An RNA of 177 nucleotides, treated with DMS and read out base by base. The reactions ran in a buffer of 150 mM KOAc, 10 mM MgCl2 and 150 mM bicine (pH 8.5), at 24 C. Source: RMDB library TTRDES, as collected in RNAgym.

RNA sequence: GGGAACGACUCGAGUAGAGUCGAAAAAAAAAAAGAUAUGGACGAAGCGAGGAUCGUCCUACCCACCUCACUCGGUCGGAAACGACCGGGUGAGAGGGACGGGAGCUUCGUCCUAAGUCAAAAAAAAGUGCAUAUUAAGGUUCGCCUUAAUAUGCACAAAAGAAACAACAACAACAAC
Reactivity to DMS in 0.01 (KOAc 150mM, MgCl2 10mM, bicine 150mM(pH8.5), 24C), signal-to-noise 1, nucleotides 027 to 126: a000a000a030a150a000a060a120g050a120u040a300u010g000g000a010c000g000a050a030g000c050g040a120g050g020a070u000c030g000u000c000c000u000a020c030c030c080a300c100c080u000c000a000c000u000c000g010g030u000c000g000g000a200a130a200c000g000a000c000c000g020g000g000u000g010a000g000a040g030g030g000a000c010g000g010g000a070g000c000u000u000c000g010u000c000c000u000a000a070g000u030c100a000a000a000a040a040a080a080a100